Chemical mapping of a 177-nucleotide RNA with DMS and 2A3. 2A3 is a SHAPE reagent: it acylates the 2'-hydroxyl of flexible nucleotides of all four kinds. The DMS profile rests on 2,239 reads. The RNA was probed in 150 mM KOAc, 10 mM MgCl2 and 150 mM bicine (pH 8.5) at 24 C. For 2A3 the reverse transcriptase was SuperScript II with manganese.
RNA sequence: GGGAACGACUCGAGUAGAGUCGAAAACUUUUACCGGCUGUCGACGUGGUCGAGGGGCGCGCCGUGCGCCUGGUUCAAGGAAAGGCCGGUAGCGAAAACGAUUACGGUUCAGCAUUGGACGCCGCGAUAUGGGCGUAUAGUUCGCUAUACGCCCAUAAAAAGAAACAACAACAACAAC
Reactivity to DMS in 0.01 (KOAc 150mM, MgCl2 10mM, bicine 150mM(pH8.5), 24C), signal-to-noise 3, nucleotides 027 to 126: c050u010u020u000u000a050c020c010g000g000c010u010g020u000c040g020a120c020g000u000g020g000u000c020g020a080g020g000g000g020c000g030c020g050c190c220g000u010g000c030g020c020c000u000g020g040u010u010c110a060a100g010g010a120a080a220g010g010c000c010g020g000u000a010g010c110g000a170a090a050a110c050g010a100u010u000a060c060g010g000u000u010c060a130g000c100a180u020u020g000g000a090c080g040c000c020g020c100g010a090
Reactivity to 2A3 in 0.01 (KOAc 150mM, MgCl2 10mM, bicine 150mM(pH8.5), 24C), signal-to-noise 1, nucleotides 027 to 126: c000u120u180u170u150a030c000c000g000g000c010u060g050u140c030g000a090c030g160u140g100g090u050c000g040a070g000g000g000g050c020g000c050g000c030c200g130u200g000c000g010c000c000u000g040g010u220u120c020a130a030g140g050a100a010a040g050g000c000c000g000g010u000a020g000c030g020a010a030a000a140c100g030a020u070u180a030c030g000g050u040u060c030a020g070c110a180u070u220g060g020a020c030g010c030c010g070c000g020a070